[RMDB]
RNA sequence: GGGAACGACUCGAGUAGAGUCGAAAAGCAGUAUCUCGUUAGGCGAGGCUCCUAUACAAACACAGGUUGCUGAUCUGACGACGUCGAGAGACGCCCAAGAUUAGGACAGGAUAUACCGAACCAAGGUGAACCUGUCCAGGGUUCGCCCUGGACAGAAGUUCUUACAGAUCUUCGGAUCUGUAAGAACAAAAGAAACAACAACAACAAC
Reactivity to 2A3 in 0.01 (KOAc 150mM, MgCl2 10mM, bicine 150mM(pH8.5), 24C), signal-to-noise 4, nucleotides 027 to 156: g060c060a010g030u120a150u070c030u020c030g030u060u130a110g060g070c020g030a040g030g000c010u030c000c020u110a130u100a210c130a050a190a000c060a010c030a130g120g000u090u140g100c020u010g000a020u000c020u030g010a020c030g010a020c000g000u010c000g010a030g000a010g000a090c000g000c000c000c010a010a000g020a020u040u060a010g010g050a030c040a040g030g060a030u070a020u050a180c010c040g020a070a020c030c040a040a010g060g000u030g010a040a030c010c000u010g000u000c000c010a000g010g010g010u020u050c150g090c000c000c000u000g000g000a000c000a010g010a010a010
Reactivity to DMS in 0.01 (KOAc 150mM, MgCl2 10mM, bicine 150mM(pH8.5), 24C), signal-to-noise 2, nucleotides 027 to 156: g020c070a130g010u000a050u000c020u010c040g000u000u010a060g020g010c020g020a230g000g020c050u000c000c020u000a160u010a170c060a130a080a100c080a130c140a140g010g040u010u000g000c010u000g000a040u010c000u000g020a170c050g000a000c000g010u000c000g010a300g020a300g000a040c000g010c000c020c050a250a040g000a030u000u010a100g020g000a180c040a100g010g000a100u010a080u000a070c010c010g000a080a120c060c030a080a190g030g010u000g020a060a080c090c000u010g010u000c040c040a040g050g030g040u000u010c300g010c000c000c000u010g000g010a020c030a030g020a060a080
This 207-nucleotide RNA was probed chemically with 2A3 and DMS. For DMS, 3,200 sequencing reads were counted. High DMS reactivity at an A or C suggests that its Watson-Crick edge is free. It was measured as part of the RMDB library M2RFPK. The reactions ran in a buffer of 150 mM KOAc, 10 mM MgCl2 and 150 mM bicine (pH 8.5), at 24 C. For 2A3, 3,810 sequencing reads were counted.